Description:
An RNA of 207 nucleotides, treated with 2A3 and DMS and read out base by base. DMS adducts were read by reverse transcription with MarathonRT. The RNA was probed in 150 mM KOAc, 10 mM MgCl2 and 150 mM bicine (pH 8.5) at 24 C. The DMS profile rests on 2,461 reads. Reactivities are given for positions 27 through 156.

RNA sequence: GGGAACGACUCGAGUAGAGUCGAAAAUACAGGUCCAGCUUAUAUUGAAAUAGACCGUGUUGAUUUUUCAAACGGGUUUUAUAGGUUGUACAGUGGUGACACAUUUUGGCGCUAUAACUAUGACAUUACUGAGAGUAAAUUUAGCUGUAAGGAAGUGAUCAUGGACAGAAUUCGUUCUGUCCAUGAUAAAAGAAACAACAACAACAAC
Reactivity to 2A3 in 0.01 (KOAc 150mM, MgCl2 10mM, bicine 150mM(pH8.5), 24C), signal-to-noise 2, nucleotides 027 to 156: u080a020c040a020g060g000u000c000c000a010g000c020u160u040a040u030a040u070u120g120a110a140a120u110a080g130a050c020c030g020u020g180u030u020g030a080u030u140u300u230u060c010a040a030a000c010g000g000g110u000u030u150u050a000u020a000g080g000u010u040g020u020a010c040a030g080u030g090g000u030g020a000c010a010c020a120u010u040u060u120g030g010c020g010c030u030a000u030a250a040c030u050a040u160g020a020c020a050u010u160a060c060u050g000a020g000a000g130u060a010a070a080u010u060u090a020g000c040u030g030u070a040a060g030g050a040a050g040u050g070
Reactivity to DMS in 0.01 (KOAc 150mM, MgCl2 10mM, bicine 150mM(pH8.5), 24C), signal-to-noise 1, nucleotides 027 to 156: u010a050c040a090g020g010u010c050c020a050g010c020u000u000a040u000a090u000u000g000a120a120a080u000a160g010a050c030c010g030u010g040u000u000g010a090u010u000u010u000u000c040a040a050a040c030g000g030g000u000u010u000u000a040u000a050g000g010u000u000g000u000a040c050a120g040u000g030g000u000g000a130c040a040c020a190u000u000u000u000g010g000c000g030c060u010a060u000a070a070c050u000a090u020g010a070c020a090u000u000a090c060u000g010a140g020a150g050u000a000a030a180u030u000u000a060g020c030u010g000u010a120a080g010g030a070a100g010u000g000